[RMDB]
Notes
This 177-nucleotide RNA was probed chemically with DMS and 2A3. The data come from the RNA Mapping Database (RMDB), library OK2TRN. Reactivities are rounded to 0.1 and cut off at 0 and 3. Conditions: 150 mM KOAc, 10 mM MgCl2 and 150 mM bicine (pH 8.5), 24 C. 2A3 adducts were read by reverse transcription with SuperScript II with manganese. For 2A3, 5,263 sequencing reads were counted. High DMS reactivity at an A or C suggests that its Watson-Crick edge is free. DMS adducts were read by reverse transcription with MarathonRT.
RNA sequence: GGGAACGACUCGAGUAGAGUCGAAAAAAGAUGUACAUGCAACUGCCUGUGCAUGAGGGCGGAAUCAUCUCCCAUGUUCUGUCUGAGGGUGCGGUGUUCCAGCCAGGAGACCUCCUCGCGACGCUCCACCAGUAUGACAGUUCGCUGUCAUACUGGUAAAAGAAACAACAACAACAAC
Reactivity to DMS in 0.01 (KOAc 150mM, MgCl2 10mM, bicine 150mM(pH8.5), 24C), signal-to-noise 5, nucleotides 027 to 126: a090a070g010a030u010g000u010a070c020a030u010g000c020a280a100c180u010g000c020c060u000g020u000g020c030a010u010g000a130g010g000g000c020g000g000a060a030u000c080a020u000c100u000c010c010c010a190u000g000u010u000c050u010g000u010c020u000g010a110g000g000g010u010g010c110g000g000u010g000u010u000c030c040a150g020c080c130a130g010g020a110g000a060c070c050u000c030c010u000c060g010c100g000a090c060g000c040u000c060c080
Reactivity to 2A3 in 0.01 (KOAc 150mM, MgCl2 10mM, bicine 150mM(pH8.5), 24C), signal-to-noise 4, nucleotides 027 to 126: a000a000g130a010u030g010u020a000c010a010u030g020c050a200a180c300u270g010c000c000u030g000u030g000c020a010u060g040a190g030g040g030c000g000g030a020a020u170c020a030u020c020u020c030c010c010a010u070g040u050u070c060u060g090u030c030u070g060a070g000g020g050u160g030c060g000g050u060g070u100u010c020c010a050g090c030c030a040g040g020a020g010a030c010c020u000c000c010u000c010g000c050g010a020c030g000c030u000c020c010